[RMDB]
RNA sequence: GGGAACGACUCGAGUAGAGUCGAAAAGAUCGUCUCUUCGGAGACGAUCAAAUAAUUCACAGGAAACGGCCAAAAGAGAAAAUCUCACCUGUGAAAAGGCCGAAACCCUCUGCUUCGGCAGAGGGAAGUUCAAUGAUUACUUCGGUAAUCAUUGAACAAAAGAAACAACAACAACAAC
Reactivity to DMS in 0.01 (KOAc 150mM, MgCl2 10mM, bicine 150mM(pH8.5), 24C), signal-to-noise 2, nucleotides 027 to 126: g000a010u000c010g020u000c000u000c000u000u020c180g030g000a000g020a010c010g000a040u000c000a020a110a050u010a030a120u010u010c000a000c000a010g000g000a140a080a210c090g010g020c010c020a010a050a050a040g020a050g000a200a130a090a090u000c020u000c000a190c010c010u000g010u010g000a010a070a090a070g000g010c020c010g000a130a070a110c010c000c000u010c000u000g000c000u000u000c200g060g000c000a000g000a000g020g020g030a000a030
Reactivity to 2A3 in 0.01 (KOAc 150mM, MgCl2 10mM, bicine 150mM(pH8.5), 24C), signal-to-noise 2, nucleotides 027 to 126: g000a000u000c000g020u000c000u000c000u010u100c200g030g010a010g010a000c000g000a000u010c000a010a000a000u000a000a000u010u100c000a000c000a000g010g080a250a300a140c040g050g000c030c020a040a040a110a010g050a010g020a050a230a220a300u050c010u000c010a020c000c000u000g010u000g030a060a070a000a010g010g000c020c010g000a060a030a040c000c000c000u010c010u000g010c020u030u040c290g060g000c000a000g000a000g040g000g000a000a000

Source: RMDB library M2PK50, as collected in RNAgym. This 177-nucleotide RNA was probed chemically with DMS and 2A3. The DMS profile rests on 1,487 reads. The reactions ran in a buffer of 150 mM KOAc, 10 mM MgCl2 and 150 mM bicine (pH 8.5), at 24 C.